[RMDB]
Chemical mapping of a 177-nucleotide RNA with 2A3. For 2A3 the reverse transcriptase was SuperScript II with manganese. Conditions: 150 mM KOAc, 10 mM MgCl2 and 150 mM bicine (pH 8.5), 24 C. The 2A3 profile rests on 357 reads. Reactivities are given for positions 27 through 126.
RNA sequence: GGGAACGACUCGAGUAGAGUCGAAAAGGUAUCGAUAAAGAACGUCGUCAAGCAGUUUAUAAAAAAAUCCAUUCUACUGUUGUAGAUAAUGGUGGUAAAAUUUACGAUAUGACUGAUAAAGAUUAUGCCUCCGAAAAUCGUUCGCGAUUUUCGGAGGAAAAGAAACAACAACAACAAC
Reactivity to 2A3 in 0.01 (KOAc 150mM, MgCl2 10mM, bicine 150mM(pH8.5), 24C), signal-to-noise 1, nucleotides 027 to 126: g120g000u140a030u090c030g000a130u060a140a230a020g090a030a110c040g020u000c000g000u050c050a070a060g220c000a000g040u030u150u000a190u270a090a000a000a000a000a000a000u170c000c000a000u000u040c000u000a030c080u070g150u300u280g090u040a000g000a000u190a110a000u110g000g010u010g000g000u000a000a000a070a070u010u020u000a000c000g040a080u000a060u130g010a060c030u010g000a000u080a030a090a000g000a000u070u020a070u300g050